[RMDB]
RNA sequence: GGGAACGACUCGAGUAGAGUCGAAAACGGAUCAUGGCGAUCGGCGGCGGGUACGGCCCGUCUAAGGUACUGCUUACCGCGGUCGGGCUUGGGCUGUUCACCGAACUUGGCGAUGAGGCCAUGACCGACACCGGGGAGUGUUCGCACUCCCCGGUGUAAAAGAAACAACAACAACAAC
Reactivity to 2A3 in 0.01 (KOAc 150mM, MgCl2 10mM, bicine 150mM(pH8.5), 24C), signal-to-noise 2, nucleotides 027 to 126: c020g010g020a100u000c000a000u010g020g000c040g090a020u010c030g070g040c000g020g010c010g000g070g040u040a000c000g020g030c000c010c000g000u030c020u050a130a100g180g000u070a020c020u070g040c030u110u110a100c040c050g020c010g000g000u030c000g000g000g000c000u090u060g000g020g000c000u000g000u040u010c170a220c180c000g040a120a160c040u150u260g090g030c000g010a060u070g050a100g080g020c000c000a000u000g000a010c000c000g010
Reactivity to DMS in 0.01 (KOAc 150mM, MgCl2 10mM, bicine 150mM(pH8.5), 24C), signal-to-noise 1, nucleotides 027 to 126: c030g000g010a150u000c000a010u000g010g030c000g000a040u000c010g010g010c000g010g010c020g030g000g030u000a050c040g000g000c010c000c000g000u000c010u010a050a200g040g000u000a030c140u000g000c130u000u000a120c240c230g000c110g000g010u010c000g010g000g010c010u020u010g030g000g080c010u010g000u000u000c030a060c000c010g000a030a260c060u010u000g010g000c000g000a040u010g000a170g000g030c000c000a010u000g000a030c020c010g020
Chemical mapping of a 177-nucleotide RNA with 2A3 and DMS. Conditions: 150 mM KOAc, 10 mM MgCl2 and 150 mM bicine (pH 8.5), 24 C. For DMS, 1,366 sequencing reads were counted. Source: RMDB library OK2TRN, as collected in RNAgym.